The data come from the RNA Mapping Database (RMDB), library OK2TST. Chemical mapping of a 177-nucleotide RNA with 2A3 and DMS. Conditions: 150 mM KOAc, 10 mM MgCl2 and 150 mM bicine (pH 8.5), 24 C.
[RMDB]
RNA sequence: GGGAACGACUCGAGUAGAGUCGAAAACGCACGACGAAUUUGAUUAGCUUUGACCCGACGUCGGUCUUUCUCAACGGGCAAUUUACUGACAGUUUCAGAAUCCAACUCCACGAGUUCACGUAAGUAGACAGGAAUAUCUGUUCGCAGAUAUUCCUGUAAAAGAAACAACAACAACAAC
Reactivity to 2A3 in 0.01 (KOAc 150mM, MgCl2 10mM, bicine 150mM(pH8.5), 24C), signal-to-noise 2, nucleotides 027 to 126: c050g000c020a060c060g070a010c060g060a100a110u090u090u160g110a110u060u150a060g030c050u170u040u080g060a140c000c000c020g050a060c010g070u060c000g020g040u010c010u030u050u010c010u000c030a000a050c020g020g000g010c020a020a060u100u030u110a050c030u000g070a030c010a130g000u000u110u070c010a010g050a050a020u000c030c020a050a030c030u020c010c000a050c070g080a030g010u040u090c010a010c090g030u040a070a070g070u060a050g030
Reactivity to DMS in 0.01 (KOAc 150mM, MgCl2 10mM, bicine 150mM(pH8.5), 24C), signal-to-noise 3, nucleotides 027 to 126: c130g020c100a030c050g010a110c030g030a130a090u000u020u000g010a110u000u000a100g010c070u010u000u010g000a110c040c000c030g020a100c160g010u010c030g020g000u000c030u000u000u000c010u000c060a090a130c090g000g000g000c060a060a060u000u000u000a060c060u000g000a050c100a080g000u010u000u000c040a050g020a050a100u000c040c070a040a100c040u000c030c040a060c070g010a110g020u000u000c060a030c100g010u000a050a080g010u000a090g000